Conditions: 150 mM KOAc, 10 mM MgCl2 and 150 mM bicine (pH 8.5), 24 C. This 177-nucleotide RNA was probed chemically with 2A3 and DMS. 2A3 adducts were read by reverse transcription with SuperScript II with manganese. The 2A3 profile rests on 78,760 reads. High DMS reactivity at an A or C suggests that its Watson-Crick edge is free. The DMS profile rests on 32,951 reads. The data come from the RNA Mapping Database (RMDB), library TTRINS. DMS adducts were read by reverse transcription with MarathonRT. Reactivities are given for positions 27 through 126.
[RMDB]
RNA sequence: GGGAACGACUCGAGUAGAGUCGAAAAGAUAUGGACGAACAACAGCAGCAUCCUUGUCGAGAUUAGUGGUCGGAAACGACCAUGGGAUCUUAGACAACAAGGAUGCUGACAUGUUCGUCCUAAGUCACAUAUACACGUAGUUCGCUACGUGUAUAUGAAAAGAAACAACAACAACAAC
Reactivity to 2A3 in 0.01 (KOAc 150mM, MgCl2 10mM, bicine 150mM(pH8.5), 24C), signal-to-noise 8, nucleotides 027 to 126: g060a020u100a060u190g010g010a000c010g010a000a010c010a030a030c050a160g120c000a000g000c000a000u010c010c000u020u030g020u040c040g000a010g010a020u010u040a030g010u010g010g000u010c020g020g030a080a090a080c020g010a000c000c020a010u020g010g280g010a000u000c010u010u040a210g060a140c060a040a020c050a040a030g010g000a000u010g000c000u000g000a000c000a000u030g000u000u000c000g000u010c000c000u000a010a010g000u000c000a010
Reactivity to DMS in 0.01 (KOAc 150mM, MgCl2 10mM, bicine 150mM(pH8.5), 24C), signal-to-noise 9, nucleotides 027 to 126: g010a040u000a300u010g010g000a020c000g010a010a000c000a040a110c300a200g010c010a010g010c000a000u000c000c000u000u000g010u000c030g000a010g000a010u000u000a300g020u000g000g010u000c000g000g000a090a120a280c010g010a020c000c000a000u000g010g020g010a010u000c000u000u000a110g020a090c300a110a060c070a030a010g000g000a010u000g010c000u000g000a010c070a130u000g000u000u000c000g000u000c000c000u000a000a070g010u000c040a290